[RMDB]
RNA sequence: GGGAACGACUCGAGUAGAGUCGAAAAGUCACGACUGCGAUCAACUCACGCUCGGAUGCGCUGAGAUGGCUGUUGCUCUGGUCGAACAGGUGCUCAUAGAAGGCCAUAAUACGCAGAGCGGUACCCGAGUCAUUACCCUGUUCGCAGGGUAAUGACUAAAAGAAACAACAACAACAAC
Reactivity to 2A3 in 0.01 (KOAc 150mM, MgCl2 10mM, bicine 150mM(pH8.5), 24C), signal-to-noise 6, nucleotides 027 to 126: g070u060c050a010c200g090a020c010u010g000c020g100a110u110c080a080a110c010u030c040a010c020g040c000u050c070g300g110a220u260g040c010g000c100u020g010a060g000a030u000g030g000c020u040g100u170u130g010c010u000c000u010g060g000u100c100g020a150a050c010a040g050g070u180g080c000u020c060a100u150a120g160a140a040g050g000c010c010a010u050a130a040u100a130c010g000c040a000g050a050g030c010g000g040u050a030c000c000c000g000
Reactivity to DMS in 0.01 (KOAc 150mM, MgCl2 10mM, bicine 150mM(pH8.5), 24C), signal-to-noise 3, nucleotides 027 to 126: g000u020c060a080c040g030a190c010u030g000c050g000a150u010c200a040a300c040u020c080a040c000g000c010u020c280g000g000a070u010g020c000g120c170u050g020a030g000a050u010g030g010c020u030g010u040u030g000c000u000c000u010g000g000u000c300g000a130a130c080a010g030g000u030g040c030u020c240a230u060a170g010a080a200g020g010c010c000a020u000a140a090u010a130c030g000c020a030g030a030g020c020g000g010u010a100c000c000c000g000
An RNA of 177 nucleotides, treated with 2A3 and DMS and read out base by base. The RNA was probed in 150 mM KOAc, 10 mM MgCl2 and 150 mM bicine (pH 8.5) at 24 C. The 2A3 profile rests on 3,692 reads. The data come from the RNA Mapping Database (RMDB), library OK1LIB. The DMS profile rests on 2,987 reads. 2A3 adducts were read by reverse transcription with SuperScript II with manganese. DMS adducts were read by reverse transcription with MarathonRT.